[RMDB]
RNA sequence: GGGAACGACUCGAGUAGAGUCGAAAAGGAGACCAGACCAGCAGGAGAUAGAACCUUCCAGAAGUGGGCAGCUGUGGUGGUGCCUUCUGGAGAAGAGCAGAGAUACACAUGCCAUGUACAGCAUGAGCAACGUAGAUCGAUUCGUCGAUCUACGUUGAAAAGAAACAACAACAACAAC
Reactivity to DMS in 0.01 (KOAc 150mM, MgCl2 10mM, bicine 150mM(pH8.5), 24C), signal-to-noise 6, nucleotides 027 to 126: g010g020a080g020a080c050c040a070g000a110c070c020a070g010c050a050g000g010a100g010a090u000a060g010a110a120c080c040u000u010c030c030a060g000a060a070g020u010g010g000g000c050a060g020c070u000g030u020g030g010u000g010g010u000g000c030c020u000u000c010u000g000g010a050g000a040a040g000a070g010c040a050g010a080g000a110u000a060c110a080c050a050u010g010c000c030a100u010g010u000a080c190a120g010c020a040u000g000a140g010
Reactivity to 2A3 in 0.01 (KOAc 150mM, MgCl2 10mM, bicine 150mM(pH8.5), 24C), signal-to-noise 3, nucleotides 027 to 126: g040g010a030g010a020c020c020a020g020a040c000c020a010g020c020a010g020g050a040g010a050u100a100g080a080a070c010c020u070u050c010c010a030g000a060a010g140u180g060g080g000c030a060g010c040u110g020u120g180g090u070g000g050u040g010c000c000u030u020c010u030g030g020a030g030a060a020g010a000g000c040a020g020a000g010a050u100a120c030a010c010a070u050g010c000c010a050u090g040u070a060c030a040g010c010a040u050g040a020g090